[RMDB]
RNA sequence: GGGAACGACUCGAGUAGAGUCGAAAAUAGCAGCGCUGUUAGUGAACGAUCGUUUUGCCGCAUUUGACAACUUUAAGACUGCGCUGUCUUCACUAUCAGUUUAGUUGUCACAUUGCCAUGCAAUGGAUAAUCCUGCAGGAUUCGUCCUGCAGGAUUAAAAAGAAACAACAACAACAAC
Reactivity to DMS in 0.01 (KOAc 150mM, MgCl2 10mM, bicine 150mM(pH8.5), 24C), signal-to-noise 4, nucleotides 027 to 126: u040a070g020c020a010g000c080g010c020u000g040u010u000a040g000u000g000a040a070c160g000a030u030c160g030u010u030u030u030g010c100c100g030c050a040u010u030u010g000a080c150a040a080c120u000u020u030a110a130g020a050c040u000g010c040g000c020u000g000u010c010u020u020c020a060c020u000a010u020c060a030g000u000u030u050a100g000u000u000g000u000c040a060c040a040u000u000g010c000c190a180u030g000c010a010a020u000g000g000a160
Reactivity to 2A3 in 0.01 (KOAc 150mM, MgCl2 10mM, bicine 150mM(pH8.5), 24C), signal-to-noise 4, nucleotides 027 to 126: u130a000g040c040a000g030c000g000c000u000g020u000u000a010g000u010g030a040a040c080g030a040u080c100g040u060u020u210u290g050c050c050g040c010a020u060u020u170g120a120c040a090a110c130u070u080u190a110a030g020a020c050u040g000c010g000c030u030g040u040c030u010u000c000a020c030u050a050u080c010a000g010u000u070u120a000g000u000u000g010u020c000a000c000a070u010u010g000c060c040a050u300g010c000a000a010u020g020g010a040
About this RNA
An RNA of 177 nucleotides, treated with DMS and 2A3 and read out base by base. The DMS profile rests on 6,858 reads. It was measured as part of the RMDB library OK1LIB. The reactions ran in a buffer of 150 mM KOAc, 10 mM MgCl2 and 150 mM bicine (pH 8.5), at 24 C.